[RMDB]
RNA sequence: GGGAACGACUCGAGUAGAGUCGAAAAUCCAUCGAUGUCUUUCACUGUACUUAGUUCCAAUUUAUAUUGCAAACAAGAUUAAUUUAGGCGAUUACUCACUAAGAUAUACCUAUUUCUACUAUGGUUAUACGUUUGAACAGUUCGCUGUUCAAACGUAAAAAGAAACAACAACAACAAC
Reactivity to 2A3 in 0.01 (KOAc 150mM, MgCl2 10mM, bicine 150mM(pH8.5), 24C), signal-to-noise 3, nucleotides 027 to 126: u030c000c000a090u100c040g080a060u090g000u000c000u010u010u020c040a040c090u060g080u100a020c020u060u040a010g010u080u030c030c000a030a040u050u140u020a300u060a060u040u160g030c030a010a140a130c030a160a030g120a170u050u120a080a040u150u130u130a030g060g000c030g030a020u020u060a030c010u020c090a060c010u020a070a000g030a070u050a010u010a080c020c010u020a050u090u150u080c040u060a110c030u010a050u140g000g000u020u010a030
Reactivity to DMS in 0.01 (KOAc 150mM, MgCl2 10mM, bicine 150mM(pH8.5), 24C), signal-to-noise 2, nucleotides 027 to 126: u020c000c000a150u020c050g000a080u040g000u010c010u000u020u000c090a110c020u000g000u010a070c040u020u000a090g020u000u000c300c030a080a050u040u010u000a090u030a060u010u000g020c130a100a070a030c080a080a080g000a150u040u010a020a020u000u010u020a050g010g020c040g070a070u010u000a020c030u000c030a100c050u000a080a070g010a100u000a040u010a060c040c010u010a120u010u000u000c010u000a040c050u020a040u010g000g010u010u020a110
Background: The record gives the reactivity of an RNA of 177 nucleotides to 2A3 and DMS. It was measured as part of the RMDB libraries RFM100 and RFMREP. For DMS the reverse transcriptase was MarathonRT.